The data come from the RNA Mapping Database (RMDB), library RFM100. This 177-nucleotide RNA was probed chemically with 2A3. 2A3 adducts were read by reverse transcription with SuperScript II with manganese. For 2A3, 569 sequencing reads were counted. The RNA was probed in 150 mM KOAc, 10 mM MgCl2 and 150 mM bicine (pH 8.5) at 24 C.
[RMDB]
RNA sequence: GGGAACGACUCGAGUAGAGUCGAAAAAGCCAACCAACAGAGAAGGGAAAGCAGUCUGUUCUGAACAUAGGGACAUAAGUUCAUUCAUGCCAAGUAUCUUUCCAGCAUGUUUCUCCCAUUUAGAAUAGGGUGGUAACGCAUUCGUGCGUUACCACCCAAAAGAAACAACAACAACAAC
Reactivity to 2A3 in 0.01 (KOAc 150mM, MgCl2 10mM, bicine 150mM(pH8.5), 24C), signal-to-noise 2, nucleotides 027 to 126: a000g090c030c000a000a000c090c100a000a020c020a040g000a000g000a040a230g050g030g000a000a000a000g010c000a000g040u010c000u020g070u080u010c000u000g010a000a000c010a090u000a020g000g000g090a010c000a010u120a160a120g000u110u090c000a020u090u010c000a000u000g030c050c000a020a030g020u010a100u130c030u100u120u010c070c000a000g000c000a000u000g030u000u230u000c070u080c030c030c030a020u180u170u110a050g010a000a090u300a170